Source information:
An RNA of 207 nucleotides, treated with DMS and 2A3 and read out base by base. Conditions: 150 mM KOAc, 10 mM MgCl2 and 150 mM bicine (pH 8.5), 24 C. It was measured as part of the RMDB library M2RFPK. The DMS profile rests on 5,253 reads. Values cover nucleotides 27 to 156. High 2A3 reactivity points to a flexible backbone, as in loops and unpaired stretches. 2A3 adducts were read by reverse transcription with SuperScript II with manganese.
RNA sequence: GGGAACGACUCGAGUAGAGUCGAAAACGGUUACGCCUUCUUUACCGUUAUCAAGGCAGGUACUCGGCCAUGCUAAGGGAAGCAUUAUUCCUUAGGCGCAUGUCGCCGCCAGCAUGGUGUGAGGGGAAAAAGUAUGCUGGGUUCGCCCAGCAUACAACAUUGAUUCGUUCUUCGGAACGAAUCAAUGAAAAGAAACAACAACAACAAC
Reactivity to DMS in 0.01 (KOAc 150mM, MgCl2 10mM, bicine 150mM(pH8.5), 24C), signal-to-noise 2, nucleotides 027 to 156: c050g000g030u000u000a030c020g000c020c010u000u000c040u000u010u010a070c030c070g000u020u010a030u000c060a080a040g020g080c030a080g020g030u010a010c000u000c010g000g000c000c010a030u010g010c010u010a160a120g030g020g030a030a060g030c170a190u010u000a230u000u000c000c020u010u000a080g030g020c010g040c040a140u000g010u010c030g030c020c010g010c060c000a070g010c020a020u000g000g050u000g020u000g030a030g000g010g000g000a050a060a070a110a150g020u010a000u000g010c000u000g010g030g020u000u020c300g030c000c010c000a010g020c000a000u000a000c000a030a110
Reactivity to 2A3 in 0.01 (KOAc 150mM, MgCl2 10mM, bicine 150mM(pH8.5), 24C), signal-to-noise 4, nucleotides 027 to 156: c000g000g010u040u050a020c050g030c010c010u060u030c040u070u170u130a040c020c010g160u080u040a050u130c100a010a030g050g010c040a010g080g020u020a040c000u000c010g020g000c000c000a000u020g000c010u050a070a100g030g000g000a030a010g050c090a190u100u090a180u090u190c000c000u020u070a040g010g000c030g020c080a160u220g090u270c040g000c010c020g020c040c000a010g010c000a000u030g020g000u050g170u150g020a020g030g000g020g060a000a060a000a000a130g000u000a000u000g000c000u000g000g030g000u000u050c090g100c010c000c000a000g000c000a000u000a000c000a010a000